[RMDB]
RNA sequence: GGGAACGACUCGAGUAGAGUCGAAAAGAAAAUAAGAGCGUAAUCGCGUCUUGACGUGAGUGAGCCCACACGAAAAGCUAUCCCAAGUGGGAUAGCAUAGCUUACAAUACGCUAAGAUUCGUGUGAACCAUACUAUGCCAUUCGUGGCAUAGUAUGGAAAAGAAACAACAACAACAAC
Reactivity to DMS in 0.01 (KOAc 150mM, MgCl2 10mM, bicine 150mM(pH8.5), 24C), signal-to-noise 6, nucleotides 027 to 126: g000a070a060a100a070u050a050a070g000a110g010c010g010u000a080a200u000c020g010c020g000u000c040u030u010g010a050c020g010u000g000a060g010u000g000a090g010c000c090c000a030c000a010c000g000a030a040a090a130g000c000u000a000u000c000c000c000a300a200g040u070g000g000g000a000u000a010g030c010a050u010a010g020c010u000u000a080c170a090a140u020a050c160g010c050u000a050a070g010a150u000u000c000g000u000g000u000g010a100a190
Reactivity to 2A3 in 0.01 (KOAc 150mM, MgCl2 10mM, bicine 150mM(pH8.5), 24C), signal-to-noise 9, nucleotides 027 to 126: g040a010a090a010a030u230a040a020g070a020g020c030g030u100a060a080u040c020g000c000g040u020c080u100u190g080a020c010g010u020g020a050g010u050g030a020g020c000c020c000a000c000a000c010g010a000a020a010a020g000c000u000a000u020c000c010c030a220a150g200u300g140g000g000a000u000a000g000c000a000u000a000g000c000u080u060a030c090a080a220u110a100c100g000c010u010a020a030g080a160u030u010c000g000u010g000u010g020a000a000